[RMDB]
RNA sequence: GGGAACGACUCGAGUAGAGUCGAAAAGAUAAGCUAGCAGCAAAAAGGAAGCGAUUCCCACCAAGUUCGGAAAGAGAUACCGGGCGAGGCGCUGAAGAAAGAAUCUCGCUUCAGACACCCCAAGGACAUGACCUUAAAAUGUUCGCAUUUUAAGGAACCUUUCUCAUAUGUUCGCAUAUGAGAAAGGAAAAGAAACAACAACAACAAC
Reactivity to DMS in 0.01 (KOAc 150mM, MgCl2 10mM, bicine 150mM(pH8.5), 24C), signal-to-noise 2, nucleotides 027 to 156: g050a150u000a040a090g010c000u000a130g040c020a070g000c040a040a050a080a100a120g010g030a050a060g020c030g010a190u000u010c010c020c080a140c030c030a080a240g010u010u000c030g020g010a140a060a150g010a110g000a180u020a190c000c030g030g010g050c010g000a260g020g020c050g020c080u010g000a030a100g020a070a080a110g010a090a070u010c050u000c080g040c050u000u050c000a120g010a300c070a050c040c010c010c030a050a090g000g000a110c060a070u010g000a110c000c000u020u000a010a010a010a010u010g010u010u010c220g000c010a010u000u000u000u000a010a020g000g000a020a070
Reactivity to 2A3 in 0.01 (KOAc 150mM, MgCl2 10mM, bicine 150mM(pH8.5), 24C), signal-to-noise 3, nucleotides 027 to 156: g020a090u150a060a040g010c030u070a020g000c060a000g000c020a010a050a100a050a050g110g010a030a000g000c010g030a040u020u020c000c020c000a000c010c020a030a010g000u000u030c030g000g050a170a080a040g160a060g000a040u080a110c020c020g020g010g000c010g000a010g000g010c060g000c070u120g030a070a030g050a030a160a020g030a050a110u030c060u020c090g010c000u020u000c030a030g070a070c030a070c010c040c000c020a020a050g050g030a030c040a130u120g070a080c000c000u010u000a010a010a000a000u000g000u040u040c120g000c080a000u010u000u000u010a000a010g000g000a000a010
Overview
Chemical mapping of a 207-nucleotide RNA with DMS and 2A3. For 2A3 the reverse transcriptase was SuperScript II with manganese. Reactivities are given for positions 27 through 156. For DMS, 1,980 sequencing reads were counted.